[RMDB]
RNA sequence: GGGAACGACUCGAGUAGAGUCGAAAAGGGGUCUGUCUCUAGCGUGACGCGAAGAACAUACUUUGUAGCCUGAAGCCUCCACGGGCUGGUAUGGGAGCGUUCGGGCAGACGGAGGCACCCAAACUCUCGGAUAAGGCUUCGGCCUUAUCCGAGAGAAUCGUUGUUAAACGUUCGCGUUUAACAACGAAAAAGAAACAACAACAACAAC
Reactivity to 2A3 in 0.01 (KOAc 150mM, MgCl2 10mM, bicine 150mM(pH8.5), 24C), signal-to-noise 2, nucleotides 027 to 156: g110g010g040g020u030c020u000g010u000c030u070c070u220a120g110c080g240u300g040a010c030g020c010g150a230a050g010a000a010c000a020u010a000c030u190u240u300g270u300a010g010c010c000u020g000a070a010g000c010c000u000c010c000a040c030g020g000g000c010u030g060g000u000a000u000g000g000g000a070g010c000g000u060u090c060g000g020g000c020a020g010a000c000g000g000a020g000g000c000a040c020c010c000a050a090a130c000u000c000u000c000g000g000a010u000a000a000g010g040c020u070u220c300g060g000c000c020u000u000a000u000c010c000g010a000g000a000g010a000a000
The record gives the reactivity of an RNA of 207 nucleotides to 2A3. The RNA was probed in 150 mM KOAc, 10 mM MgCl2 and 150 mM bicine (pH 8.5) at 24 C. The data come from the RNA Mapping Database (RMDB), library RNAMAK.